[RMDB]
An RNA of 207 nucleotides, treated with DMS and 2A3 and read out base by base.
Source: RMDB library RSTRND, as collected in RNAgym.
Reactivities are rounded to 0.1 and cut off at 0 and 3.
2A3 is a SHAPE reagent: it acylates the 2'-hydroxyl of flexible nucleotides of all four kinds.
For DMS, 1,892 sequencing reads were counted.
The RNA was probed in 150 mM KOAc, 10 mM MgCl2 and 150 mM bicine (pH 8.5) at 24 C.
2A3 adducts were read by reverse transcription with SuperScript II with manganese.

RNA sequence: GGGAACGACUCGAGUAGAGUCGAAAAUUAAGCGGUGAGCCGUAGCACUGAUCUGUCUUUGGGUCAGGUGGGGUCAAACUCACAGCUACGACACUUACAAAGAAUCGGGAUCUAGCCGGGUCACACGCGUUAGGCCUUAAAAAGAAGUGAAUCGCUGGAUACAAAGGUUGUUCGCAACCUUUGUAUCAAAAGAAACAACAACAACAAC
Reactivity to DMS in 0.01 (KOAc 150mM, MgCl2 10mM, bicine 150mM(pH8.5), 24C), signal-to-noise 1, nucleotides 027 to 156: u000u000a030a040g020c020g000g000u000g010a070g010c040c000g060u000a050g120c000a300c040u000g020a020u000c000u010g010u020c170u000u020u000g010g010g000u000c000a040g010g030u010g000g010g040g070u000c300a060a110a200c050u000c030a040c020a080g010c030u000a040c040g000a050c040a090c080u000u000a070c040a090a030a110g020a080a160u020c040g010g000g000a050u010c070u000a040g000c040c040g040g010g000u000c020a090c040a060c070g000c040g000u010u000a030g010g020c000c010u000u000a020a030a030a110a090g010a060a080g000u000g010a040a050u160c030g000c060u000g010
Reactivity to 2A3 in 0.01 (KOAc 150mM, MgCl2 10mM, bicine 150mM(pH8.5), 24C), signal-to-noise 3, nucleotides 027 to 156: u120u050a080a000g020c010g020g010u020g040a030g090c060c020g000u030a010g000c020a030c150u010g000a010u000c000u020g160u030c060u110u130u190g010g000g020u000c010a010g000g030u010g000g010g010g000u070c040a050a050a050c010u000c010a010c010a010g050c020u030a030c040g050a010c010a020c040u100u150a060c020a030a090a010g060a040a080u130c090g030g020g030a070u000c000u010a000g010c010c020g070g000g110u150c080a050c030a020c080g000c000g010u020u010a020g000g030c010c000u090u100a070a140a010a020a000g120a070a040g040u050g040a040a020u000c070g000c080u090g070